[RMDB]
RNA sequence: GGGAACGACUCGAGUAGAGUCGAAAAAUGAAGCCCAUGCGCAGCAUUUCGUCAGCUUCAUCCAGAACCAGACCGCUCAGUUUAGAGAGGUCCAGAGUGCCACGUUUCAGGUGGUCCAGCAGACGGAGUCACUGGACCGAUUCGUCGGUCCAGUGACAAAAGAAACAACAACAACAAC
Reactivity to DMS in 0.01 (KOAc 150mM, MgCl2 10mM, bicine 150mM(pH8.5), 24C), signal-to-noise 3, nucleotides 027 to 126: a070u000g010a040a070g010c020c060c070a090u020g010c060g010c130a060g000c060a040u000u010u000c050g030u000c070a150g030c020u000u000c050a060u000c050c090a210g010a090a070c090c090a160g000a040c000c000g020c010u000c020a180g000u020u000u000a170g000a020g010a050g000g000u000c000c070a070g010a110g000u000g000c010c040a040c020g010u010u010u020c200a090g000g010u000g010g020u000c080c040a070g000c060a060g010a050c060g000g000a160
Reactivity to 2A3 in 0.01 (KOAc 150mM, MgCl2 10mM, bicine 150mM(pH8.5), 24C), signal-to-noise 2, nucleotides 027 to 126: a040u040g010a010a040g020c010c050c070a020u150g000c150g000c060a170g000c060a090u030u090u120c060g020u030c070a010g010c010u030u030c000a030u000c020c030a020g050a050a010c010c000a010g000a000c000c010g020c000u010c040a040g060u130u160u190a040g030a000g000a000g020g000u000c010c000a020g080a030g050u110g020c000c010a040c060g030u020u140u150c120a060g190g000u010g000g030u040c020c000a050g050c030a030g010a040c000g050g030a060
The record gives the reactivity of an RNA of 177 nucleotides to DMS and 2A3. The data come from the RNA Mapping Database (RMDB), library OK2TST.